[RMDB]
RNA sequence: GGGAACGACUCGAGUAGAGUCGAAAACAACUGGUCCUUCGGGACCAGUUGAAAAAGAUAUGGACGGUGCAUAGCACAACAGCAACCAUCGGAAACGAUGGUUGACAUGUGCGUGCCCGUCCUAAGUCAAAAAGCUAUCCGUUUCGACGGAUAGCAACAAGUGUUAAUCCUUCGGGAUUAACACUUGAAAAGAAACAACAACAACAAC
Reactivity to DMS in 0.01 (KOAc 150mM, MgCl2 10mM, bicine 150mM(pH8.5), 24C), signal-to-noise 2, nucleotides 027 to 156: c020a000a000c000u000g020g000u000c000c000u000u020c300g080g000g000a000c000c000a000g000u010u000g000a010a050a100a140a100g010a110u000a210u010g000g020a040c000g000g020u000g050c000a050u000a160g040c030a030c020a030a030c090a130g000c010a010a050c010c000a020u000c000g000g000a180a150a290c000g020a040u020g000g000u010u000g000a040c080a300u020g020u000g030c000g030u000g000c000c000c000g000u000c000c000u010a020a040g010u060c040a040a070a070a100a100g010c000u000a020u000c010c010g050u000u000u010c300g070a090c000g010g000a010u000a010g010c000a000a030
Reactivity to 2A3 in 0.01 (KOAc 150mM, MgCl2 10mM, bicine 150mM(pH8.5), 24C), signal-to-noise 4, nucleotides 027 to 156: c000a000a000c000u000g000g000u020c010c010u060u110c300g020g000g000a000c000c000a000g000u010u000g000a000a000a000a000a000g050a020u060a030u060g000g000a000c000g030g000u290g080c000a010u060a220g010c010a020c020a050a150c090a090g050c000a010a000c000c000a000u000c010g020g010a040a090a010c010g000a010u000g010g010u000u000g020a000c000a040u020g010u020g000c000g000u000g010c000c000c000g000u000c000c000u000a000a000g000u100c100a050a060a000a030a020g000c000u000a000u010c000c000g000u000u050u110c180g110a020c000g010g000a000u000a000g030c000a000a000